[RMDB]
RNA sequence: GGGAACGACUCGAGUAGAGUCGAAAAGAUAUGGAAGUGGGCAGUAUUCAGGCGUUGAAAUCGGAAACGAUGGAGCCUGAUACGAUGCACUUCCUAAGUCAAAGUAGGCUGCUUCGGCAGCCUACAACAUUAGGCAUCGGUUCGCCGAUGCCUAAUGAAAAGAAACAACAACAACAAC
Reactivity to 2A3 in 0.01 (KOAc 150mM, MgCl2 10mM, bicine 150mM(pH8.5), 24C), signal-to-noise 2, nucleotides 027 to 126: g020a010u070a040u130g030g000a000a000g000u050g070g300g130c100a010g010u050a060u250u300c000a010g030g020c020g270u300u030g040a020a020a010u000c000g000g010a010a090a020c020g000a000u010g010g000a010g000c000c000u000g000a000u000a000c000g010a050u110g040c010a010c000u000u010c000c000u000a050a000g010u000c020a100a020a080g000u000a000g010g030c020u000g010c030u130u160c300g110g000c040a020g000c020c000u010a000c010a000a000
Reactivity to DMS in 0.01 (KOAc 150mM, MgCl2 10mM, bicine 150mM(pH8.5), 24C), signal-to-noise 2, nucleotides 027 to 126: g000a040u010a300u020g000g000a020a000g020u000g010g000g020c190a240g000u010a000u010u010c010a000g000g000c000g030u000u010g000a060a110a020u000c000g010g000a130a090a180c000g010a000u000g000g000a190g020c000c000u000g010a000u000a000c010g000a150u010g030c000a010c010u000u000c000c010u010a030a090g010u000c040a100a150a180g000u000a010g000g000c000u000g000c000u000u010c210g050g010c000a000g000c000c000u000a000c010a030a170
An RNA of 177 nucleotides, treated with 2A3 and DMS and read out base by base.
For 2A3 the reverse transcriptase was SuperScript II with manganese.
The 2A3 profile rests on 2,396 reads.
For DMS the reverse transcriptase was MarathonRT.
The RNA was probed in 150 mM KOAc, 10 mM MgCl2 and 150 mM bicine (pH 8.5) at 24 C.
Values cover nucleotides 27 to 126.